RNA sequence: GGGAACGACUCGAGUAGAGUCGAAAAGUACCUUUCGGUGGGAAUAUGUACAUAGCACUGGCAGCUUGCAUUGGGGUAUCCCUAGGGCUUGUCACAUUAAUAUGCUGCUGCAAGGGGAGGUGUAAGACCCUCAUCAUCGAUUCGUCGAUGAUGAGGGAAAAGAAACAACAACAACAAC
Reactivity to DMS in 0.01 (KOAc 150mM, MgCl2 10mM, bicine 150mM(pH8.5), 24C), signal-to-noise 3, nucleotides 027 to 126: g000u000a110c040c040u000u010u000c050g010g040u010g000g010g000a100a070u010a080u000g030u000a070c160a100u030a100g000c060a130c090u010g020g010c010a030g020c030u000u000g020c070a120u000u000g000g000g040g010u000a100u000c030c020c010u010a150g000g000g020c130u000u000g020u000c060a050c130a070u000u000a090a090u010a090u000g010c020u000g000c030u010g010c070a050a020g010g020g000g000a080g000g000u000g000u010a070a140g010a170
Reactivity to 2A3 in 0.01 (KOAc 150mM, MgCl2 10mM, bicine 150mM(pH8.5), 24C), signal-to-noise 2, nucleotides 027 to 126: g000u070a080c010c000u010u120u120c100g010g100u120g020g060g030a040a070u100a050u110g050u010a080c070a110u120a030g040c030a010c070u050g000g010c020a000g030c010u080u200g040c020a040u000u090g060g000g000g000u150a020u130c040c010c020u020a070g080g010g000c000u030u080g020u020c020a000c000a080u040u050a040a020u080a050u100g000c020u000g000c030u020g030c000a030a020g000g000g000g010a020g040g000u030g000u040a050a010g070a050
Chemical mapping of a 177-nucleotide RNA with DMS and 2A3.
For 2A3 the reverse transcriptase was SuperScript II with manganese.
Conditions: 150 mM KOAc, 10 mM MgCl2 and 150 mM bicine (pH 8.5), 24 C.
The 2A3 profile rests on 1,568 reads.
For DMS the reverse transcriptase was MarathonRT.